This 207-nucleotide RNA was probed chemically with 2A3 and DMS. For DMS the reverse transcriptase was MarathonRT. Conditions: 150 mM KOAc, 10 mM MgCl2 and 150 mM bicine (pH 8.5), 24 C. It was measured as part of the RMDB library OK3TST. 2A3 adducts were read by reverse transcription with SuperScript II with manganese.

RNA sequence: GGGAACGACUCGAGUAGAGUCGAAAACUCCAUUAAAAUGAUUAUUCCGGCAGCGAACUUGAUAUUGGAUAUAUCACAACCUUUGUUAAUAUCUACGACAAUAGACAGCAGUCCCAUGGUUCCAUAAACAGUGAGUUUAUCUUUCUUUGAAGAGAUACGAUACAUAUCUGUUCGCAGAUAUGUAUCGAAAAGAAACAACAACAACAAC
Reactivity to 2A3 in 0.01 (KOAc 150mM, MgCl2 10mM, bicine 150mM(pH8.5), 24C), signal-to-noise 4, nucleotides 027 to 156: c010u030c020c000a010u110u230a060a160a070a100u120g020a040u060u140a060u150u100c060c050g050g000c030a030g010c040g080a030a050c040u070u070g030a040u100a100u090u130g030g010a010u030a010u020a020u170c040a040c030a070a090c050c070u140u140u090g020u040u030a070a050u050a070u100c030u040a020c050g070a020c030a050a080u030a090g030a010c030a030g030c020a020g030u010c010c000c010a020u050g030g000u030u030c030c000a040u100a030a080a020c000a020g020u030g060a000g000u040u040u030a090u010c000u000u030u000c050u090u090u130g090a150a050g020a000g050a060u110a100
Reactivity to DMS in 0.01 (KOAc 150mM, MgCl2 10mM, bicine 150mM(pH8.5), 24C), signal-to-noise 2, nucleotides 027 to 156: c060u000c030c040a220u010u010a060a050a070a120u000g010a140u000u000a160u000u000c030c030g030g020c020a080g010c030g010a070a070c040u000u000g040a080u000a080u010u000g010g010a180u000a120u010a050u000c070a070c050a090a080c030c090u000u010u020g010u000u000a080a120u000a060u000c040u010a050c050g010a120c060a050a180u010a050g010a070c040a110g000c030a060g000u000c020c010c020a130u000g010g020u000u000c020c040a070u010a050a050a040c070a060g030u000g000a070g000u000u000u000a040u020c010u010u020u000c010u010u000u000g000a090a060g020a060g010a110u010a120